[RMDB]
RNA sequence: GGGAACGACUCGAGUAGAGUCGAAAAGAUAUGGAGGGCAGAGCGAUAAGCUGCUUUCGGAAACGAAAGGCAGCUUUUGACGCUCGAUGCUCCUAAGUCAAAAGCAACGCCGUUCGCGGCGUUGCAAGUCAUUCAUAUAGUUCGCUAUAUGAAUGACAAAAGAAACAACAACAACAAC
Reactivity to 2A3 in 0.01 (KOAc 150mM, MgCl2 10mM, bicine 150mM(pH8.5), 24C), signal-to-noise 4, nucleotides 027 to 126: g020a000u070a010u130g020g010a030g060g140g030c130a040g010a000g000c010g030a070u040a290a010g010c000u010g000c000u010u000u010c010g010g010a050a040a020c010g020a030a010a030g220g020c000a000g000c000u000u010u010u040g030a010c010g000c000u000c000g000a010u030g070c000u000c000c010u010a060a020g030u010c030a000a000a150a080g000c000a000a000c000g000c020c000g050u100u140c300g010c010g120g000c000g000u000u000g000c000a000a000
Reactivity to DMS in 0.01 (KOAc 150mM, MgCl2 10mM, bicine 150mM(pH8.5), 24C), signal-to-noise 9, nucleotides 027 to 126: g000a040u000a230u010g000g000a020g010g000g020c160a200g000a010g010c000g010a140u010a010a020g010c000u000g000c000u000u000u000c000g010g000a080a070a130c000g010a010a010a030g010g010c000a000g010c000u000u000u000u000g000a170c040g010c000u000c000g000a110u020g000c000u000c000c000u000a030a150g000u000c030a060a080a120a150g010c000a010a000c010g010c000c000g020u000u010c230g020c000g010g000c000g020u000u000g000c000a010a020
Structure probing data (2A3 and DMS) for a 177-nucleotide construct. For DMS the reverse transcriptase was MarathonRT. For 2A3, 19,244 sequencing reads were counted.